Annotation
Structure probing data (2A3 and DMS) for a 177-nucleotide construct. The reactions ran in a buffer of 150 mM KOAc, 10 mM MgCl2 and 150 mM bicine (pH 8.5), at 24 C.
RNA sequence: GGGAACGACUCGAGUAGAGUCGAAAAGAUAUGGAUCCCAUAGACAUGACGCAGCAUGUCGGAAACGACAUGACGUCAACAGCUAUGUGGAUCCUAAGUCAAACCGUGGAGCUUCGGCUCCACGGAAGGUAAUCAAUUACUUCGGUAAUUGAUUACCAAAAGAAACAACAACAACAAC
Reactivity to 2A3 in 0.01 (KOAc 150mM, MgCl2 10mM, bicine 150mM(pH8.5), 24C), signal-to-noise 7, nucleotides 027 to 126: g020a000u060a030u120g010g000a000u000c000c020c000a000u010a000g040a030c240a290u300g010a010c000g030c060a110g050c010a100u000g010u010c000g000g020a040a030a010c020g010a000c000a010u020g010a040c010g000u000c010a050a040c110a060g010c000u010a000u040g060u300g050g000a000u010c000c000u000a030a010g030u020c030a060a050a110c010c010g000u000g000g000a020g000c010u090u130c300g180g000c000u030c020c000a000c000g000g000a010a010
Reactivity to DMS in 0.01 (KOAc 150mM, MgCl2 10mM, bicine 150mM(pH8.5), 24C), signal-to-noise 5, nucleotides 027 to 126: g000a030u000a300u000g000g010a000u000c000c000c010a020u000a000g010a040c110a300u010g010a010c010g000c200a230g000c010a000u000g000u000c010g000g010a060a060a140c010g020a000c000a010u000g000a140c010g000u000c000a040a070c300a160g000c010u000a000u000g000u020g030g010a010u000c000c000u000a000a080g010u000c020a150a160a170c000c000g020u000g000g000a010g010c010u000u020c260g020g020c000u000c000c010a000c010g010g000a010a010